This 177-nucleotide RNA was probed chemically with 2A3 and DMS. It was measured as part of the RMDB libraries RFM100 and RFMREP. The reactions ran in a buffer of 150 mM KOAc, 10 mM MgCl2 and 150 mM bicine (pH 8.5), at 24 C. For DMS the reverse transcriptase was MarathonRT.
RNA sequence: GGGAACGACUCGAGUAGAGUCGAAAAGCCGUAGCGAAAGCGAGUCCGAAUAGGGCGUUUGUAGUGGCAUGUUCUAGACCCGAAGCGGAGUGAUCUACCCAUGGCCAGGGUGAAGCGACGGUAAGACAAUACGAGAUUAAUUCGUUAAUCUCGUAUUAAAAGAAACAACAACAACAAC
Reactivity to 2A3 in 0.01 (KOAc 150mM, MgCl2 10mM, bicine 150mM(pH8.5), 24C), signal-to-noise 7, nucleotides 027 to 126: g050c000c000g040u050a000g000c010g030a050a020a000g010c010g020a030g040u000c010c010g050a130a150u160a270g000g020g000c030g010u040u130u160g160u070a100g030u080g050g010c050a040u080g050u050u040c060u050a080g040a120c000c010c020g030a060a000g020c030g030g020a060g030u090g040a070u010c020u060a050c000c010c030a060u070g080g000c030c030a030g010g010g000u020g030a060a010g010c010g040a030c020g000g040u050a070a010g050a030c070
Reactivity to DMS in 0.01 (KOAc 150mM, MgCl2 10mM, bicine 150mM(pH8.5), 24C), signal-to-noise 9, nucleotides 027 to 126: g010c010c010g010u020a050g010c010g000a140a090a090g010c040g000a070g020u000c010c010g000a120a080u030a160g010g000g010c030g000u010u010u010g010u010a060g020u010g000g000c040a060u010g010u000u000c040u010a090g010a130c060c010c020g010a100a160g010c050g000g000a080g010u020g000a100u010c050u010a080c040c020c020a070u020g010g010c050c060a100g000g000g000u000g010a090a120g000c030g000a100c070g000g000u010a080a090g010a090c160